[RMDB]
RNA sequence: GGGAACGACUCGAGUAGAGUCGAAAAUGUACACGUACGCGAUCCUGGUACGUAUCUAGACUAGGUACCAUGCGCACUAGUGGAUCAGUACGUACAGUACCUAGAGUACUACUAGGUCAUGGAUCACCGACGAUACUAAGUUCGCUUAGUAUCGUCGAAAAGAAACAACAACAACAAC
Reactivity to 2A3 in 0.01 (KOAc 150mM, MgCl2 10mM, bicine 150mM(pH8.5), 24C), signal-to-noise 7, nucleotides 027 to 126: u110g020u040a030c050a000c110g020u030a010c020g020c100g070a010u010c010c010u010g000g010u010a010c030g030u020a050u040c080u060a030g150a210c030u030a030g060g020u020a040c020c020a060u160g010c030g020c020a020c040u040a040g130u070g200g010a060u080c010a010g000u000a000c000g000u010a010c010a010g010u010a000c000c000u010a010g010a020g070u090a100c040u030a040c010u030a050g060g010u040c020a070u120g040g010a030u040c030a020c100
Reactivity to DMS in 0.01 (KOAc 150mM, MgCl2 10mM, bicine 150mM(pH8.5), 24C), signal-to-noise 8, nucleotides 027 to 126: u010g010u010a080c120a080c070g010u010a020c020g010c120g010a010u000c010c000u010g010g010u000a000c020g020u000a020u000c060u000a120g000a160c060u000a040g010g000u000a050c050c100a220u000g000c020g000c020a020c020u000a070g010u000g010g010a080u010c090a110g010u000a010c000g010u000a040c130a110g010u010a010c000c010u000a010g010a110g020u010a160c150u000a080c060u000a040g010g010u010c070a080u000g000g010a050u000c060a170c200